[RMDB]
RNA sequence: GGGAACGACUCGAGUAGAGUCGAAAAGAUAUGGAUCGAUCCAAGGGAGCACCACUCGGAAACGAGUGUUGCUUUGAUCUUGGGUCGAUCCUAAGUCAAAACGUCCUUAAGUUCGCUUAAGGACGAAGAUCUUUACUCCGUUCGCGGAGUAAAGAUCAAAAGAAACAACAACAACAAC
Reactivity to DMS in 0.01 (KOAc 150mM, MgCl2 10mM, bicine 150mM(pH8.5), 24C), signal-to-noise 2, nucleotides 027 to 126: g000a030u000a260u010g010g000a010u000c000g020a000u000c000c000a010a000g000g000g010a010g010c000a000c070c000a000c000u000c000g030g000a080a060a140c010g010a020g010u000g010u010u000g020c000u000u020u020g000a040u010c000u000u010g010g000g010u000c000g000a000u000c000c000u000a010a080g010u000c050a080a080a100a200c000g010u000c000c000u000u000a000a000g010u000u000c220g000c000u000u000a000a010g000g010a010c010g000a040a040
Reactivity to 2A3 in 0.01 (KOAc 150mM, MgCl2 10mM, bicine 150mM(pH8.5), 24C), signal-to-noise 2, nucleotides 027 to 126: g010a000u030a030u090g000g000a000u010c010g000a000u000c010c000a020a010g300g110g070a000g070c000a010c020c010a010c000u000c010g000g030a030a020a020c010g010a020g000u000g020u000u000g000c000u030u050u120g060a080u060c000u000u000g000g000g000u010c010g000a000u000c010c000u010a000a000g000u000c010a020a010a030a050c010g000u000c000c000u020u000a010a020g010u050u190c300g030c200u010u010a020a000g000g000a010c000g000a000a000